[RMDB]
Source: RMDB library RFM100, as collected in RNAgym. Chemical mapping of a 177-nucleotide RNA with 2A3 and DMS. For 2A3 the reverse transcriptase was SuperScript II with manganese. Values are in units of 0.01, from 0 to 300, in steps of 10. For 2A3, 753 sequencing reads were counted. For DMS the reverse transcriptase was MarathonRT. Values cover nucleotides 27 to 126. The RNA was probed in 150 mM KOAc, 10 mM MgCl2 and 150 mM bicine (pH 8.5) at 24 C.
RNA sequence: GGGAACGACUCGAGUAGAGUCGAAAACCCAGGAGACGCUAGCGUGUGCCCAGGGAAGAGUUCUCUUUUCUUUUUAACAAGCAUAUCCUACCUUGGAAACGGAUUAUCCGGCGAUAAGGAGGAUGCCAGAGGUAUCACCUUUCGAGGUGAUACCUCUAAAAGAAACAACAACAACAAC
Reactivity to 2A3 in 0.01 (KOAc 150mM, MgCl2 10mM, bicine 150mM(pH8.5), 24C), signal-to-noise 2, nucleotides 027 to 126: c020c000c000a010g020g010a090g000a020c030g000c050u070a040g050c060g040u070g040u070g120c010c040c040a000g000g090g000a060a030g050a020g040u120u030c030u000c000u040u080u030u040c000u090u100u000u010u070a080a030c090a170a000g010c020a050u030a070u140c030c000u190a300c010c000u000u000g020g000a010a040a010c000g010g020a010u100u120a080u300c010c000g040g060c060g020a020u000a070a020g000g000a000g030g000a000u000g000c000c000
Reactivity to DMS in 0.01 (KOAc 150mM, MgCl2 10mM, bicine 150mM(pH8.5), 24C), signal-to-noise 1, nucleotides 027 to 126: c000c030c010a170g000g060a070g130a000c010g040c000u020a210g000c000g050u020g040u000g020c000c060c030a050g000g000g000a020a030g010a100g000u000u000c050u000c000u000u000u000u000c030u000u000u000u060u040a140a110c300a080a210g000c000a040u000a090u000c000c000u000a150c000c000u010u000g000g000a240a090a040c020g000g020a300u050u120a200u040c000c000g000g000c040g000a300u000a000a000g000g000a020g000g000a030u000g000c020c090